[RMDB]
RNA sequence: GGGAACGACUCGAGUAGAGUCGAAAAUGGACAUCUUUCGAGAUGUCCAAAAUACCGAGAAUGCGACUCGGUAAAUAAAACGCACCCUUGGAAACAAGGGAUAAAACCAGUUCUUCGGAACUGGUAACUAUGAUGAAUACUUCGGUAUUCAUCAUAGAAAAGAAACAACAACAACAAC
Reactivity to DMS in 0.01 (KOAc 150mM, MgCl2 10mM, bicine 150mM(pH8.5), 24C), signal-to-noise 4, nucleotides 027 to 126: u010g000g010a000c000a020u000c000u000u000u010c160g020a020g020a020u000g000u000c000c000a010a010a070a090u010a240c000c000g000a000g020a060a080u000g020c000g010a100c000u000c000g000g000u000a020a030a040u000a030a010a020a020c010g030c020a060c010c000c010u000u000g000g000a140a140a200c000a000a000g000g010g000a060u000a030a050a090a080c000c000a010g000u000u000c000u000u010c210g020g000a010a000c000u000g000g010u000a010a080
Reactivity to 2A3 in 0.01 (KOAc 150mM, MgCl2 10mM, bicine 150mM(pH8.5), 24C), signal-to-noise 2, nucleotides 027 to 126: u060g000g010a000c000a000u010c000u030u080u070c110g060a020g000a000u000g000u010c010c000a010a010a000a000u040a010c000c010g000a000g020a040a080u050g000c000g020a030c010u000c010g020g010u010a010a000a010u010a000a010a000a010c010g010c010a030c000c000c000u000u010g000g010a030a030a030c000a000a000g000g000g000a010u070a010a030a000a000c000c000a000g000u000u000c000u020u110c180g100g000a010a000c000u000g000g000u000a000a000